[RMDB]
RNA sequence: GGGAACGACUCGAGUAGAGUCGAAAACGGCUUUUGAGGUUGAAUCACAGCAGGUCACACCUAAUGACCAUGCUAAUGCCAGAGCUUUUUCGCAUCUGGCCACAAAGUUAAUUGAACAAGAGGUUCCGUAAACGAGUUAGUUCGCUAACUCGUUUACAAAAGAAACAACAACAACAAC
Reactivity to 2A3 in 0.01 (KOAc 150mM, MgCl2 10mM, bicine 150mM(pH8.5), 24C), signal-to-noise 1, nucleotides 027 to 126: c000g000g030c000u000u050u010u230g100a080g100g000u070u130g150a040a030u120c040a050c020a070g010c030a010g030g010u050c000a050c010a050c040c070u050a090a100u070g000a000c000c010a050u040g010c050u050a100a000u130g000c030c000a000g000a000g020c000u170u060u030u050u050c040g000c060a210u000c010u000g020g060c050c040a040c010a010a060a010g040u050u040a080a070u060u110g090a080a020c030a060a060g030a030g210g000u020u000c030c000
Reactivity to DMS in 0.01 (KOAc 150mM, MgCl2 10mM, bicine 150mM(pH8.5), 24C), signal-to-noise 2, nucleotides 027 to 126: c120g040g010c010u010u000u000u000g020a060g020g000u000u000g010a100a060u010c150a130c130a050g000c020a030g000g020u000c010a030c120a100c230c230u000a130a130u010g000a050c010c010a080u000g020c010u020a100a120u000g000c020c000a000g010a000g010c020u000u020u000u020u020c220g000c070a130u000c000u000g040g010c010c180a090c110a010a100a080g020u000u010a010a080u010u000g000a030a020c080a070a060g000a060g000g010u010u000c020c130
Description: The record gives the reactivity of an RNA of 177 nucleotides to 2A3 and DMS. The data come from the RNA Mapping Database (RMDB), library RFMREP. The RNA was probed in 150 mM KOAc, 10 mM MgCl2 and 150 mM bicine (pH 8.5) at 24 C. For 2A3 the reverse transcriptase was SuperScript II with manganese.